Conditions: 150 mM KOAc, 10 mM MgCl2 and 150 mM bicine (pH 8.5), 24 C. An RNA of 177 nucleotides, treated with DMS and 2A3 and read out base by base. For DMS the reverse transcriptase was MarathonRT.
[RMDB]
RNA sequence: GGGAACGACUCGAGUAGAGUCGAAAAUCUGAUCAGGACAAUGAAAUACGCACCGUACUUCCUGACUGUCUUCUCGAUCGUGCGGUUUGCCAGGAGCCAAGGCAUCCUCUGCCAGGGGCGUGGCUCGGACGCGUCGUAUAUUCGUAUACGACGCGUCAAAAGAAACAACAACAACAAC
Reactivity to DMS in 0.01 (KOAc 150mM, MgCl2 10mM, bicine 150mM(pH8.5), 24C), signal-to-noise 3, nucleotides 027 to 126: u060c020u000g010a160u000c000a020g030g000a050c300a160a140u030g000a000a050a100u030a070c130g030c050a100c090c000g100u030a050c070u050u010c000c000u030g000a100c120u000g000u020c150u010u000c050u020c020g010a070u020c130g000u000g040c110g000g000u020u020u100g000c020c050a090g000g040a020g030c000c000a060a050g000g000c040a100u010c050c000u010c140u010g000c120c090a120g000g000g000g060c050g000u020g000g020c020u000c000g020
Reactivity to 2A3 in 0.01 (KOAc 150mM, MgCl2 10mM, bicine 150mM(pH8.5), 24C), signal-to-noise 4, nucleotides 027 to 126: u060c020u050g060a130u040c000a020g020g000a010c090a110a280u270g090a170a120a040u230a070c060g000c040a040c030c000g020u030a020c020u040u010c010c000u000g030a020c000u040g040u030c040u030u020c020u010c000g110a200u060c040g000u030g050c010g010g000u060u070u090g050c020c010a070g040g020a010g000c000c040a050a040g100g000c020a150u140c000c030u080c080u120g140c050c060a030g030g010g000g010c040g020u020g010g000c000u010c010g010
The data come from the RNA Mapping Database (RMDB), library OK1LIB.